[RMDB]
RNA sequence: GGGAACGACUCGAGUAGAGUCGAAAAGACGCUGACGUGGGUGAGCACGCCGUCGGCAGGCGCGGCGAUGGUGUGUUCCAUCUUCAUGGCCUCCAGCCAGAUCAACGGCUGACCGGCCGUGACCGUGCGUACUCUCCCGGUUCGCCGGGAGAGUACGAAAAGAAACAACAACAACAAC
Reactivity to DMS in 0.01 (KOAc 150mM, MgCl2 10mM, bicine 150mM(pH8.5), 24C), signal-to-noise 1, nucleotides 027 to 126: g030a070c080g000c070u000g000a130c060g060u020g020g020g030u000g000a010g000c030a050c020g010c010c010g040u010c010g010g020c080a140g010g000c060g030c080g000g030c050g000a030u020g000g020u000g000u000g000u000u010c090c020a060u000c080u000u000c040a070u000g000g000c000c020u000c090c000a040g010c010c010a140g020a110u000c210a130a110c120g000g000c000u000g000a080c110c120g000g000c000c000g050u000g000a070c130c060g000u000g000
Reactivity to 2A3 in 0.01 (KOAc 150mM, MgCl2 10mM, bicine 150mM(pH8.5), 24C), signal-to-noise 1, nucleotides 027 to 126: g030a000c020g000c090u050g040a040c030g090u110g070g050g010u160g040a020g030c030a010c000g010c000c000g000u000c010g040g000c010a070g120g080c090g000c030g050g040c000g010a000u000g010g020u030g000u000g010u000u050c060c000a030u030c020u120u040c020a000u000g020g010c000c040u010c040c000a010g020c000c000a120g030a300u170c090a130a040c110g000g010c020u010g000a070c060c090g000g010c000c000g000u000g010a000c030c010g090u060g020